[RMDB]
RNA sequence: GGGAACGACUCGAGUAGAGUCGAAAAAUGGUCUUUGCAGAGGCAUACGACAUCGCCUUGGACAUCACCUUCCCCAAAGGAGCUGAAGGGGGACUGGAUUUUGGGAUUGUCAGGGUCACAGAGGAGGCUUGUAUUCGAUCUUCGGAUCGAAUACAAGAAAAGAAACAACAACAACAAC
Reactivity to 2A3 in 0.01 (KOAc 150mM, MgCl2 10mM, bicine 150mM(pH8.5), 24C), signal-to-noise 2, nucleotides 027 to 126: a000u130g070g000u030c100u050u070u050g040c060a050g030a080g190g000c060a050u060a120c130g110a040c060a090u100c090g040c000c000u050u030g100g020a020c020a030u030c000a050c000c010u020u020c050c020c000c000a060a180a040g050g050a040g080c030u060g060a030a080g030g000g000g000g000a010c060u060g090g000a090u050u060u040u180g030g010g000a030u060u030g020u070c010a030g040g110g000u020c040a020c010a050g060a060g060g000a030g020g000
Reactivity to DMS in 0.01 (KOAc 150mM, MgCl2 10mM, bicine 150mM(pH8.5), 24C), signal-to-noise 2, nucleotides 027 to 126: a020u000g050g000u000c010u000u000u000g000c070a300g010a030g010g000c050a050u010a050c160g030a090c190a090u000c110g010c020c030u000u010g030g020a170c080a080u010c080a050c030c040u000u010c020c010c010c090a060a160a100g000g020a120g020c050u000g030a080a100g010g020g030g000g000a070c090u000g010g000a110u000u010u010u000g020g020g010a070u000u000g000u010c050a080g000g010g010u000c060a040c110a060g000a130g000g010a090g000g010
About this RNA: An RNA of 177 nucleotides, treated with 2A3 and DMS and read out base by base. DMS adducts were read by reverse transcription with MarathonRT. It was measured as part of the RMDB library OK2TRN. The reactions ran in a buffer of 150 mM KOAc, 10 mM MgCl2 and 150 mM bicine (pH 8.5), at 24 C.